[RMDB]
RNA sequence: GGGAACGACUCGAGUAGAGUCGAAAACAACAGCGUAAUCGCGUCUUGACGUGAUCUAGUUAGCAUUGACUGAAUGCUAACUAUAUUGUCUGUCAUAGACAAGACGCUGUUCUAAUGACAGUGAUACGAUAUAGUGGUAUUUCGAUACUACUAUAUCAAAAGAAACAACAACAACAAC
Reactivity to DMS in 0.01 (KOAc 150mM, MgCl2 10mM, bicine 150mM(pH8.5), 24C), signal-to-noise 9, nucleotides 027 to 126: c220a040a020c010a000g000c010g010u010a100a070u030c060g010c300g000u000c010u020u000g000a010c000g020u000g000a010u000c090u000a000g000u000u000a000g010c000a010u000u000g010a180c210u060g010a050a010u000g000c000u000a000a000c000u000a000u010a000u000u000g000u000c000u000g000u000c000a000u000a000g000a020c000a050a210g000a030c000g010c000u000g000u000u000c080u020a080a070u020g010a110c150a090g000u020g000a090u020a080c230
Reactivity to 2A3 in 0.01 (KOAc 150mM, MgCl2 10mM, bicine 150mM(pH8.5), 24C), signal-to-noise 9, nucleotides 027 to 126: c030a000a000c000a000g000c000g020u060a110a110u100c030g010c030g050u010c010u010u030g010a000c000g030u020g000a010u000c010u000a000g000u000u000a000g000c000a000u010u050g230a300c100u140g210a070a000u000g000c000u000a000a000c000u000a000u000a000u000u010g020u010c010u020g000u000c000a010u040a040g000a000c000a000a010g010a000c000g000c000u000g000u000u000c010u060a120a100u090g080a030c030a060g100u050g090a060u070a180c100